[RMDB]
The data come from the RNA Mapping Database (RMDB), library M2RFPK. This 207-nucleotide RNA was probed chemically with DMS and 2A3. Values cover nucleotides 27 to 156.
RNA sequence: GGGAACGACUCGAGUAGAGUCGAAAACUGCGCUGAGCCCUUCUCCCCCAGCUUGCCUGUGUCCUAGGGAAUUGGAAGGUCAUCCUUAACAGGAUCGUGUGGAAGUCCUGCUCGGGGCGGAAGCAUUAUAAACCUUAGACGUUCGCGUCUAAGGUAAGAAUUAACACACCUUCGGGUGUGUUAAUUCAAAAGAAACAACAACAACAAC
Reactivity to DMS in 0.01 (KOAc 150mM, MgCl2 10mM, bicine 150mM(pH8.5), 24C), signal-to-noise 1, nucleotides 027 to 156: c030u000g010c040g000c040u000g000a120g000c000c010c060u000u010c030u000c010c040c000c000c030a160g000c060u010u010g030c030c040u000g010u000g000u000c020c040u010a170g020g040g000a100a050u000u000g000g020a150a080g030g030u000c100a100u000c020c010u000u010a100a130c090a060g040g010a030u000c080g000u000g000u000g060g000a190a150g000u000c000c010u000g000c080u010c090g010g030g010g020c010g010g000a180a170g010c040a070u000u000a070u000a070a110a050c000c000u000u000a010g010a020c000g060u000u000c240g020c000g000u000c000u000a010a010g000g020u000a000a030
Reactivity to 2A3 in 0.01 (KOAc 150mM, MgCl2 10mM, bicine 150mM(pH8.5), 24C), signal-to-noise 1, nucleotides 027 to 156: c020u020g040c080g020c030u090g000a080g000c000c000c000u150u110c150u050c000c010c010c000c000a030g000c030u040u040g060c000c000u070g010u000g070u100c040c000u030a040g030g020g000a070a130u110u130g040g020a070a040g070g020u100c010a080u110c000c000u170u000a120a050c110a030g010g000a020u060c040g010u010g000u060g110g010a000a010g020u080c000c020u020g030c020u040c120g020g010g010g000c000g010g030a010a000g000c020a000u000u140a080u190a110a090a040c000c000u000u000a000g000a000c000g000u000u020c200g020c020g080u000c000u000a000a000g000g000u000a000a000